Chemical mapping of a 177-nucleotide RNA with 2A3 and DMS. The 2A3 profile rests on 19,042 reads. The DMS profile rests on 52,791 reads. The data come from the RNA Mapping Database (RMDB), library OK2TRN. The RNA was probed in 150 mM KOAc, 10 mM MgCl2 and 150 mM bicine (pH 8.5) at 24 C. Reactivities are given for positions 27 through 126.

RNA sequence: GGGAACGACUCGAGUAGAGUCGAAAAAGGGCCUGGAAUGGUCUGGCGUAGAGGGUGAGACCCCUGUAGACGUAAGCUGGAGCCUUCUGUGUGUUUUCCCGAGUAGUGCGUGACUCCUGGAAUUGCGCCUUUAAUACGUUUUCGAACGUAUUAAAGGAAAAGAAACAACAACAACAAC
Reactivity to 2A3 in 0.01 (KOAc 150mM, MgCl2 10mM, bicine 150mM(pH8.5), 24C), signal-to-noise 8, nucleotides 027 to 126: a000g070g000g010c020c020u050g040g090a070a050u130g030g040u020c030u020g010g000c020g010u080a050g020a070g100g040g010u060g070a110g070a060c020c010c000c000u040g060u070a080g040a090c050g050u060a040a060g010c010u030g040g010a040g070c010c000u040u020c020u020g110u020g000u000g020u040u040u060u030c010c000c010g000a020g010u120a020g030u020g030c030g020u040g030a040c020u030c020c040u050g030g090a110a070u110u110g030c030g020
Reactivity to DMS in 0.01 (KOAc 150mM, MgCl2 10mM, bicine 150mM(pH8.5), 24C), signal-to-noise 9, nucleotides 027 to 126: a090g000g000g010c010c010u000g010g020a120a070u010g010g010u000c010u000g000g020c060g020u000a070g010a070g010g000g010u010g000a190g010a260c140c010c010c010u000g010u000a060g010a100c110g000u010a080a120g010c030u000g010g000a140g000c030c040u000u000c030u000g000u010g020u000g010u000u000u000u000c010c000c020g010a120g010u010a070g020u000g010c050g020u000g000a080c050u000c020c050u000g010g010a070a100u000u000g010c130g010

2A3 adducts were read by reverse transcription with SuperScript II with manganese.